The record gives the reactivity of an RNA of 177 nucleotides to DMS.
DMS adducts were read by reverse transcription with MarathonRT.
The RNA was probed in 150 mM KOAc, 10 mM MgCl2 and 150 mM bicine (pH 8.5) at 24 C.
Reactivities are rounded to 0.1 and cut off at 0 and 3.
RNA sequence: GGGAACGACUCGAGUAGAGUCGAAAAGAUAUGGAUCCCUGACUGUAGAUGCUAACCUGAUAUAUUGGAUCGGAAACGAUCCUAUAUCAGGUUAGCAUCGCAGAUAGUCACAUGGGAUCCUAAGUCAGAAGAAUAUGCUGUUCGCAGCAUAUUCUUCAAAAGAAACAACAACAACAAC
Reactivity to DMS in 0.01 (KOAc 150mM, MgCl2 10mM, bicine 150mM(pH8.5), 24C), signal-to-noise 1, nucleotides 027 to 126: g040a080u010a300u000g010g000a020u000c000c000c000u010g000a050c010u010g000u000a080g000a000u000g000c000u000a010a000c000c000u000g000a030u010a020u000a050u000u010g000g040a020u000c000g000g000a060a120a300c030g000a000u000c000c000u000a000u000a000u000c030a000g030g000u000u000a010g000c000a000u000c000g000c120a060g060a050u000a030g010u000c030a100c270a100u000g010g010g000a030u000c000c010u000a010a090g010u030c080a130